[RMDB]
RNA sequence: GGGAACGACUCGAGUAGAGUCGAAAAAGUUCGCGCUUCCGUGAAACGCGAAAAUCGGACGGUGGCUGCAAGUCGCAUCGCAAAACCGCGGCAAGUGGAGUUAGCGAGAGGCGGCUGGGUUUUGGCUAGAACACACGGUACUUCGGUACCGUGUGAAUAGACACUUUACUUUCGAGUAAAGUGUCUAAAAAGAAACAACAACAACAAC
Reactivity to 2A3 in 0.01 (KOAc 150mM, MgCl2 10mM, bicine 150mM(pH8.5), 24C), signal-to-noise 2, nucleotides 027 to 156: a000g090u060u030c020g000c000g000c050u120u010c050c070g090u100g060a030a060a050c070g010c020g010a020a000a010a040u130c050g040g050a020c010g030g040u060g020g000c040u040g000c080a000a030g010u000c010g010c010a050u020c010g000c030a050a090a020a020c020c000g040c010g220g000c270a130a040g020u030g060g050a100g030u040u040a000g010c010g010a020g000a040g210g010c020g000g000c000u010g010g030g000u040u110u080u080g010g000c010u040a030g070a150a000c000a000c000a000c000g000g000u010a020c000u020u050c210g030g010u030a000c000c000g000u000g000u000g000a000a000
Reactivity to DMS in 0.01 (KOAc 150mM, MgCl2 10mM, bicine 150mM(pH8.5), 24C), signal-to-noise 2, nucleotides 027 to 156: a120g010u000u000c010g020c040g030c030u000u020c040c260g000u010g000a030a010a010c020g020c000g000a020a010a080a080u010c130g010g000a140c010g010g040u000g030g000c000u000g020c040a040a070g010u010c000g030c000a110u020c030g050c030a060a110a120a090c010c020g000c000g020g000c110a130a190g010u000g010g000a130g020u000u010a180g020c000g000a070g000a090g040g020c000g020g020c010u010g000g010g010u000u000u000u010g020g000c060u000a140g000a120a240c010a010c000a030c000g030g020u010a010c000u010u020c300g050g020u000a020c000c010g020u010g000u000g000a040a070